[RMDB]
RNA sequence: GGGAACGACUCGAGUAGAGUCGAAAAGAGUCCUUCGGCCUCGACAAGCCGUCCGGCGCGCUGGUGGCGCAACUGGUGGAAGACGGCCCGGCGGCCAAGGGUGGCCUGCAGGUGGGCGAUGUGAUCACCUCCAUGGACUAUUCGUAGUCCAUGGAGGAAAAGAAACAACAACAACAAC
Reactivity to 2A3 in 0.01 (KOAc 150mM, MgCl2 10mM, bicine 150mM(pH8.5), 24C), signal-to-noise 2, nucleotides 027 to 126: g030a010g050u050c000c000u020u050c100g090g000c000c000u040c030g060a100c080a050a040g010c000c020g000u050c040c010g070g010c120g000c020g010c170u100g020g140u180g060g090c060g010c070a080a020c050u100g070g000u100g020g110a070a050g010a020c010g040g000c000c010c010g010g000c020g010g000c020c000a040a030g020g000g030u030g050g000c000c040u020g000c040a060g120g090u070g060g040g000c030g010a060u100g080u160g050a030u110c010a050
Reactivity to DMS in 0.01 (KOAc 150mM, MgCl2 10mM, bicine 150mM(pH8.5), 24C), signal-to-noise 2, nucleotides 027 to 126: g010a100g010u000c010c020u000u000c110g010g000c030c010u000c030g010a070c080a140a190g000c000c000g010u000c040c050g020g010c130g030c020g020c020u010g010g010u000g020g010c030g000c100a080a080c090u020g010g040u010g000g010a180a100g010a090c050g000g000c010c030c000g010g040c070g030g000c000c010a060a060g000g010g020u000g010g000c010c050u010g040c170a070g020g030u000g000g010g010c030g000a090u000g010u010g010a090u000c090a140

This 177-nucleotide RNA was probed chemically with 2A3 and DMS. For 2A3 the reverse transcriptase was SuperScript II with manganese.